[RMDB]
RNA sequence: GGGAACGACUCGAGUAGAGUCGAAAAUAUGCCCGCUAUUUCCGGAUGGUGGGCCGUAAUGUGCUGCAUGCGCUAGGGUUCGACGCGUUCGGGCUGCCCGCCGAGCAAUACGCGGUACAAACCGGCAGGUGGAGGCUGUUUUCGAACAGCCUCCACCAAAAGAAACAACAACAACAAC
Reactivity to 2A3 in 0.01 (KOAc 150mM, MgCl2 10mM, bicine 150mM(pH8.5), 24C), signal-to-noise 1, nucleotides 027 to 126: u300a080u110g030c040c000c000g000c050u110a110u000u040u000c000c070g080g000a020u030g000g010u020g000g000g070c040c000g110u130a220a000u130g040u000g130c110u050g090c070a100u050g000c080g000c040u170a140g010g010g010u000u030c060g060a150c070g080c000g120u030u090c030g020g010g000c050u050g020c000c000c000g000c010c030g130a030g060c000a000a060u060a080c080g020c020g030g080u000a080c020a020a050a040c000c020g000g040c090a030

An RNA of 177 nucleotides, treated with 2A3 and read out base by base.
The reactions ran in a buffer of 150 mM KOAc, 10 mM MgCl2 and 150 mM bicine (pH 8.5), at 24 C.
For 2A3, 531 sequencing reads were counted.
Reactivities are given for positions 27 through 126.
It was measured as part of the RMDB library OK1LIB.